Structure probing data (2A3) for a 207-nucleotide construct. 2A3 adducts were read by reverse transcription with SuperScript II with manganese. Values cover nucleotides 27 to 156. For 2A3, 392 sequencing reads were counted. The RNA was probed in 150 mM KOAc, 10 mM MgCl2 and 150 mM bicine (pH 8.5) at 24 C.
[RMDB]
RNA sequence: GGGAACGACUCGAGUAGAGUCGAAAAGUGGCGCGUGCCUGUAGUCCCAGCUACUCGGGAGGCUGAGGCUGGAGGAUCGCUUGAGUCCAGGAGUUCUGGGCUGUAGUGCGCUAUGCCGAUCGGGUGUCCGCACUAAGUUCGGCAUCAAUAUGGUGACGAGGAUUCCAUUGUUCGCAAUGGAAUCCUCAAAAGAAACAACAACAACAAC
Reactivity to 2A3 in 0.01 (KOAc 150mM, MgCl2 10mM, bicine 150mM(pH8.5), 24C), signal-to-noise 1, nucleotides 027 to 156: g130u170g000g000c030g000c010g080u190g030c050c020u050g190u000a010g080u230c000c000c000a030g020c000u110a040c000u050c050g130g000g000a170g000g010c000u000g040a010g010g030c000u000g000g030a050g000g100a090u120c140g030c040u080u120g020a000g000u030c000c000a070g170g000a070g010u120u150c000u040g000g000g040c000u000g000u050a020g000u090g010c000g000c020u010a010u000g000c000c000g030a020u020c020g160g070g000u000g000u130c130c110g050c030a000c000u130a170a140g060u000u050c000g000g000c000a010u050c050a010a150u210a110u220g160g030u040g100a110c150